Chemical mapping of a 207-nucleotide RNA with 2A3 and DMS. The 2A3 profile rests on 6,339 reads. The reactions ran in a buffer of 150 mM KOAc, 10 mM MgCl2 and 150 mM bicine (pH 8.5), at 24 C. It was measured as part of the RMDB library OK3TST.
[RMDB]
RNA sequence: GGGAACGACUCGAGUAGAGUCGAAAAGGAUCUUACGACCAUGUGGAGGAGGAUCUUACGAUCAUGUGGAGGAGAUUCCACAUGGAUAAGUCACGUUAUCAUCGUAAGAUCUUUCCACAUGGAUAACGUGACUUAUCGUCGUAAGAUCAGAGAGAGACGUAUGAAGCUAGUUCGCUAGCUUCAUACGAAAAGAAACAACAACAACAAC
Reactivity to 2A3 in 0.01 (KOAc 150mM, MgCl2 10mM, bicine 150mM(pH8.5), 24C), signal-to-noise 5, nucleotides 027 to 156: g060g000a000u000c000u010u000a010c000g020a020c030c080a170u140g080u150g090g110a120g060g090a110g080g000a010u000c000u000u010a010c010g000a040u070c000a000u030g000u020g050g000a020g100g080a150g040a200u150u040c000c000a000c010a000u000g020g000a000u000a000a000g000u000c000a000c020g000u010u000a000u010c060a000u050c010g000u010a010a010g010a010u000c000u010u010u000c010c000a070c020a060u120g040g000a000u000a000a010c000g000u000g010a000c000u030u020a020u070c100g100u020c000g000u020a000a010g010a000u010c010a000g020a000g000a000g010a030g010a020
Reactivity to DMS in 0.01 (KOAc 150mM, MgCl2 10mM, bicine 150mM(pH8.5), 24C), signal-to-noise 3, nucleotides 027 to 156: g010g020a030u000c010u000u000a010c020g000a100c250c060a100u000g030u010g000g010a140g000g000a220g040g000a040u000c000u000u000a040c000g020a080u000c000a030u000g020u010g010g000a060g050g040a290g010a250u010u000c010c000a010c000a000u000g000g010a090u010a020a020g000u010c030a020c040g010u000u000a040u010c040a110u010c010g000u000a040a030g000a040u000c030u000u000u000c010c020a150c160a070u000g010g010a020u010a010a010c010g000u000g000a060c030u000u000a030u000c070g000u000c000g000u010a010a020g010a030u000c010a100g010a120g000a150g000a150g010a150